Chemical mapping of a 177-nucleotide RNA with DMS and 2A3.
[RMDB]
RNA sequence: GGGAACGACUCGAGUAGAGUCGAAAACGAAAGACGGAGACGCGCAGCCCUUGACGCGUCGGCGUUGCGCUGAUGCGUCUGGUACUCUAGAUACUGCAUAUCUGCUCGCUCGCACUCUCCACAUGACGUAGUCACUACUCUUCGGAGUAGUGACUACAAAAGAAACAACAACAACAAC
Reactivity to DMS in 0.01 (KOAc 150mM, MgCl2 10mM, bicine 150mM(pH8.5), 24C), signal-to-noise 8, nucleotides 027 to 126: c060g010a110a120a100g010a120c120g010g010a020g010a040c220g030c020g000c070a050g000c090c110c050u000u010g010a010c010g020c000g010u000c000g010g010c020g020u060u030g030c080g030c010u000g010a010u000g010c000g000u000c000u000g000g000u010a090c190u020c160u060a030g010a040u000a050c120u030g000c140a300u010a030u010c010u000g000c160u020c110g020c080u010c040g000c040a100c190u000c000u000c000c010a100c160a070u020g010a210c170
Reactivity to 2A3 in 0.01 (KOAc 150mM, MgCl2 10mM, bicine 150mM(pH8.5), 24C), signal-to-noise 9, nucleotides 027 to 126: c040g040a070a020a020g110a030c100g020g010a020g000a010c030g030c000g020c060a020g020c030c010c000u040u150g010a000c000g000c000g010u010c000g000g010c010g090u290u300g080c110g000c060u010g000a010u010g000c000g000u000c000u000g000g020u070a080c040u030c060u140a020g020a060u060a070c050u140g090c060a070u040a050u110c020u030g020c030u040c070g010c010u010c010g000c010a050c010u010c000u000c010c000a060c020a100u170g040a030c110

The RNA was probed in 150 mM KOAc, 10 mM MgCl2 and 150 mM bicine (pH 8.5) at 24 C.
Values cover nucleotides 27 to 126.
It was measured as part of the RMDB libraries RFM100 and RFMREP.
DMS adducts were read by reverse transcription with MarathonRT.